This 177-nucleotide RNA was probed chemically with DMS.
[RMDB]
RNA sequence: GGGAACGACUCGAGUAGAGUCGAAAACGUGCUAGAUACAAUGACCUUGUCCCGCGCAUUUACCGUUGUGUCGAAAUAAGGCGUAAGCCUGUGAACCAUUAUAAGCGAUUGAUUGUGUGCUGAGUGGGUAUACCUAGGGCUUCGGCCCUAGGUAUACAAAAGAAACAACAACAACAAC
Reactivity to DMS in 0.01 (KOAc 150mM, MgCl2 10mM, bicine 150mM(pH8.5), 24C), signal-to-noise 1, nucleotides 027 to 126: c100g010u000g000c050u000a080g000a080u000a070c090a060a070u000g000a090c150c090u010u000g000u000c030c030c040g000c070g010c040a090u000u020u020a080c090c040g000u000u000g020u030g000u010c030g000a060a100a070u000a060a020g010g010c000g030u030a040a190g000c010c000u000g000u010g010a070a130c060c040a020u010u040a050u000a090a070g010c040g010a050u000u000g010a060u010u020g000u050g000u000g000c030u000g010a040g050u000g010g000

It was measured as part of the RMDB library RFMREP.